[RMDB]
RNA sequence: GGGAACGACUCGAGUAGAGUCGAAAAUCCUGUUGUGCCUGAUACUGUUGAAGUCCCACCGCAAGUGGUGAAACUUCCGUCUGCACCUCAGACUAUCCAGCCCGAGGUAAAAGAAGUUGCACCUGUCACCGUGGGGGGUUCGCCCCCCACAAAAGAAACAACAACAACAAC
Reactivity to 2A3 in 0.01 (KOAc 150mM, MgCl2 10mM, bicine 150mM(pH8.5), 24C), signal-to-noise 2, nucleotides 027 to 129: u080c020c010u040g030u060u000g000u000g010c000c000u050g050a040u130a170c020u040g040u070u050g050a030a000g120u110c010c010c000a070c030c030g100c090a110a000g040u040g020g000u000g050a060a000a000c000u050u000c000c040g010u070c040u160g060c110a100c030c050u100c000a000g000a000c010u000a080u150c060c010a040g020c020c000c000g080a110g030g030u000a010a010a000a030g040a010a000g000u050u020g030c000a000c010c010u050g020u040c010a000c040c020
Reactivity to DMS in 0.01 (KOAc 150mM, MgCl2 10mM, bicine 150mM(pH8.5), 24C), signal-to-noise 3, nucleotides 027 to 129: u020c020c000u030g040u010u010g000u040g010c220c000u010g010a060u000a080c130u020g000u040u030g020a000a000g010u030c000c040c000a040c120c300g030c000a000a060g030u020g040g010u080g030a060a000a010c020u000u090c000c260g000u000c140u010g020c220a140c100c070u000c000a100g000a070c000u030a010u050c200c140a020g010c030c010c050g000a060g000g030u030a090a070a100a060g010a100a040g030u020u020g020c000a030c000c030u030g030u020c000a070c070c050